[RMDB]
RNA sequence: GGGAACGACUCGAGUAGAGUCGAAAAAUAAAAAAUCUAACAAAAUUACAGUACAGCAAGGCCGAGGUGUAUCAAAUACAAAACAGCGAAAUGGCAGCGACAGGAGGCGAGUAGAGGCAGCGCGGCGUAACGCUUUGGUUUUCGAACCAAAGCGUUAAAAAGAAACAACAACAACAAC
Reactivity to DMS in 0.01 (KOAc 150mM, MgCl2 10mM, bicine 150mM(pH8.5), 24C), signal-to-noise 2, nucleotides 027 to 126: a050u090a020a030a080a060a080a060u050c070u020a100a100c040a050a070a140a050u030u000a090c080a030g020u000a020c050a060g030c040a100a110g010g070c090c020g000a060g000g070u000g050u010a000u020c100a050a030a220u040a050c140a010a110a120a050c070a060g010c000g000a040a030a120u000g000g000c040a080g010c040g000a070c080a020g040g020a120g040g000c090g000a070g010u000a040g020a060g000g060c030a060g000c050g010c050g060g000c060g020
Reactivity to 2A3 in 0.01 (KOAc 150mM, MgCl2 10mM, bicine 150mM(pH8.5), 24C), signal-to-noise 1, nucleotides 027 to 126: a000u300a000a000a020a000a000a030u270c280u300a140a060c090a000a060a190a000u220u220a150c000a020g060u060a050c030a030g000c020a000a100g000g000c000c000g040a010g000g000u050g000u020a030u010c060a010a020a010u210a180c030a020a000a000a000c040a020g040c020g020a060a060a050u090g080g000c010a000g000c000g020a000c000a000g020g020a020g000g040c040g000a000g020u010a000g000a040g080g070c000a010g010c030g000c000g020g000c030g040